The record gives the reactivity of an RNA of 177 nucleotides to 2A3 and DMS. DMS adducts were read by reverse transcription with MarathonRT.
[RMDB]
RNA sequence: GGGAACGACUCGAGUAGAGUCGAAAAGCGCAGAAGCGCCGGCCAAAUACACGCAAGUAGCCCGAGGUAAAACGUGGGCAGAGAUCGAUGUCCGGAUUCAUUGGCCGAUAAGAGCUUCGCAGCAGGCAAAAAUAUUUAUUUUCGAAUAAGUAUUUUUAAAAGAAACAACAACAACAAC
Reactivity to 2A3 in 0.01 (KOAc 150mM, MgCl2 10mM, bicine 150mM(pH8.5), 24C), signal-to-noise 7, nucleotides 027 to 126: g020c010g010c060a060g020a090a000g010c020g000c020c000g010g020c010c000a010a060a000u220a030c100a020c040g070c080a100a040g050u040a040g100c000c010c010g050a070g010g080u090a050a050a050a040c050g040u260g000g000g000c010a000g020a000g000a100u090c070g040a060u100g070u100c060c050g050g020a050u090u040c040a010u070u050g010g000c000c000g000a000u040a030a050g050a020g000c000u000u010c000g000c020a030g010c010a010g070g000c020
Reactivity to DMS in 0.01 (KOAc 150mM, MgCl2 10mM, bicine 150mM(pH8.5), 24C), signal-to-noise 9, nucleotides 027 to 126: g000c030g010c050a190g030a040a020g010c000g010c130c000g010g000c000c000a010a020a080u020a060c090a050c060g010c190a100a130g000u010a100g010c010c000c010g000a100g010g010u020a100a070a120a140c070g010u030g000g010g010c010a300g010a080g010a040u010c030g000a120u030g000u030c110c060g000g000a050u010u010c060a090u000u000g000g010c000c000g010a110u020a060a090g010a100g000c010u000u000c010g000c090a250g020c040a080g010g010c130

For 2A3, 10,702 sequencing reads were counted. The RNA was probed in 150 mM KOAc, 10 mM MgCl2 and 150 mM bicine (pH 8.5) at 24 C.